Source: RMDB library M2PK90, as collected in RNAgym. Chemical mapping of a 177-nucleotide RNA with DMS and 2A3. For 2A3, 2,182 sequencing reads were counted. Reactivities are given for positions 27 through 126. Conditions: 150 mM KOAc, 10 mM MgCl2 and 150 mM bicine (pH 8.5), 24 C.
RNA sequence: GGGAACGACUCGAGUAGAGUCGAAAAUAACAUCGUAGUGUAAGACGAAAAGUCAACGUCGCUUGCCAGCAGGACCACGAAAGGAAUACGCUUCGGUAACUACUCGAGAUCCCAAGCGAUAACACAAGAAUUACCAUGUCUUCGGACAUGGUAAUUCAAAAGAAACAACAACAACAAC
Reactivity to DMS in 0.01 (KOAc 150mM, MgCl2 10mM, bicine 150mM(pH8.5), 24C), signal-to-noise 2, nucleotides 027 to 126: u020a050a140c140a040u010c050g000u000a100g010u020g010u000a020a150g000a070c020g000a050a130a100a150g000u020c030a100a060c150g010u000c060g010c100u010u000g020c070c070a070g020c020a030g020g000a050c020c010a060c070g020a030a050a070g020g000a100a060u000a070c130g000c060u020u000c010g020g000u010a050a110c010u000a000c000u000c000g010a030g030a180u010c000c000c010a090a070g010c150g000a060u010a100a020c100a020c140a090a110
Reactivity to 2A3 in 0.01 (KOAc 150mM, MgCl2 10mM, bicine 150mM(pH8.5), 24C), signal-to-noise 2, nucleotides 027 to 126: u060a020a020c030a050u010c020g020u060a100g050u010g040u150a070a060g050a050c050g050a010a190a140a000g080u050c070a030a030c000g050u000c020g020c080u040u060g050c000c020a020g030c000a030g030g070a010c000c010a030c070g090a100a050a020g100g050a060a050u070a070c020g000c040u000u020c000g000g040u060a160a110c000u000a000c000u000c000g010a010g010a030u010c000c000c000a020a010g060c060g130a120u110a120a080c060a000c050a150a050